[RMDB]
RNA sequence: GGGAACGACUCGAGUAGAGUCGAAAAUAUCCUGCGUUCGCGCAGGAUACAGCACAAAACUCGGAGGGCGCGCACUCGCAGACAAAACAAAAAGCGAAGCAAGUGAGCUUAGAUUCGUCUAAGCUAAUCGAGUACUAUAUUUCGAUAUAGUACUCGAAAAAGAAACAACAACAACAAC
Reactivity to DMS in 0.01 (KOAc 150mM, MgCl2 10mM, bicine 150mM(pH8.5), 24C), signal-to-noise 7, nucleotides 027 to 126: u000a000u000c000c000u000g010c000g030u000u010c220g030c010g030c000a010g010g000a000u000a000c100a100g010c100a050c060a070a110a150a080c050u000c020g010g000a080g010g000g010c030g010c060g010c040a050c040u000c040g010c030a070g010a100c120a040a050a070a080c150a050a060a070a100a080g010c040g010a090a080g000c090a040a070g010u010g000a030g010c000u000u000a000g000a030u000u010c200g010u000c000u000a000a010g000c000u000a030a090
Reactivity to 2A3 in 0.01 (KOAc 150mM, MgCl2 10mM, bicine 150mM(pH8.5), 24C), signal-to-noise 6, nucleotides 027 to 126: u040a010u000c000c000u000g020c010g010u010u040c270g000c000g000c090a000g000g000a000u000a000c000a000g070c030a020c020a060a110a120a050c030u030c030g120g020a030g040g030g020c010g010c020g000c030a020c020u010c010g010c010a010g070a100c050a020a130a070a010c070a020a120a040a030a000g060c040g060a050a010g050c030a060a050g080u120g130a010g010c000u000u010a000g000a030u030u040c130g020u000c130u010a010a010g000c000u030a020a100